This 177-nucleotide RNA was probed chemically with DMS and 2A3. The DMS profile rests on 3,386 reads. For DMS the reverse transcriptase was MarathonRT. Reactivities are given for positions 27 through 126.
[RMDB]
RNA sequence: GGGAACGACUCGAGUAGAGUCGAAAAAUUGAACAAAGUUUUGGACGGCCGAGGAAGCCUACCAGCAUAUUUGGGUUCAAAAACAUCAGAGUCUACCUCAAUUCUUCAGCCUUGGGAGAAGGAAAGCCUAUACCAAGGGAUUCGUCCCUUGGUAUAGAAAAGAAACAACAACAACAAC
Reactivity to DMS in 0.01 (KOAc 150mM, MgCl2 10mM, bicine 150mM(pH8.5), 24C), signal-to-noise 4, nucleotides 027 to 126: a090u000u010g000a060a080c040a110a090a090g000u000u000u010u010g010g010a150c240g000g000c020c020g000a130g000g010a140a130g010c030c010u000a260c060c030a060g000c160a070u000a070u000u020u010g000g020g010u020u000c020a020a040a040a060a090c080a090u000c080a080g000a040g010u000c030u000a160c060c020u000c080a050a080u000u000c030u000u000c040a100g010c070c070u000u000g000g000g000a050g010a050a030g000g000a070a070a100g020c180
Reactivity to 2A3 in 0.01 (KOAc 150mM, MgCl2 10mM, bicine 150mM(pH8.5), 24C), signal-to-noise 3, nucleotides 027 to 126: a000u030u050g010a010a000c030a040a070a040g030u060u080u130u060g020g020a010c010g020g030c010c020g010a040g050g160a070a000g020c000c000u010a050c010c020a020g040c030a050u040a170u190u080u100g120g020g000u030u030c040a050a010a000a000a050c040a050u140c030a020g010a010g100u020c020u040a060c010c020u040c020a050a100u090u000c010u060u050c020a030g110c040c000u100u140g070g010g020a060g010a040a010g040g020a040a050a010g050c010

Overview
For 2A3, 3,504 sequencing reads were counted.